The data come from the RNA Mapping Database (RMDB), library OK1LIB. This 177-nucleotide RNA was probed chemically with DMS and 2A3. 2A3 adducts were read by reverse transcription with SuperScript II with manganese. Values cover nucleotides 27 to 126.
[RMDB]
RNA sequence: GGGAACGACUCGAGUAGAGUCGAAAAACUUAAGGGAAUAUAUGGGGGAUACAUAAAAAUAUUUCAAUUGAAUUAGUAGUAUUGUGGUGUGGUCUACUUAUAUCCAUAUAAGUAGUAUAUGGUGAUGAGGAGUAUUAUACUUCGGUAUAAUACUCCUAAAAGAAACAACAACAACAAC
Reactivity to DMS in 0.01 (KOAc 150mM, MgCl2 10mM, bicine 150mM(pH8.5), 24C), signal-to-noise 4, nucleotides 027 to 126: a070c050u010u020a110a070g010g010g020a090a050u020a040u020a050u020g000g010g010g000g000a070u020a030c050a050u030a030a070a100a070a030u000a010u000u010u010c030a090a090u030u020g010a080a090u010u020a090g010u010a020g010u000a030u010u000g010u020g000g000u010g000u000g000g000u000c020u010a020c010u000u020a020u010a050u030c060c090a070u000a030u000a000a070g010u010a070g010u010a060u000a040u010g000g000u010g010a110u010g010
Reactivity to 2A3 in 0.01 (KOAc 150mM, MgCl2 10mM, bicine 150mM(pH8.5), 24C), signal-to-noise 3, nucleotides 027 to 126: a010c040u110u090a030a060g040g010g030a080a100u250a020u080a060u250g020g000g000g040g020a030u120a160c010a020u180a060a180a010a010a010u140a090u130u300u130c080a120a120u100u130g160a070a070u130u010a010g030u020a000g000u010a060u040u160g030u000g000g080u100g020u020g180g010u000c000u000a000c000u000u020a010u000a030u200c020c080a020u010a000u000a090a000g110u130a010g080u010a080u000a010u170g050g010u080g030a100u080g020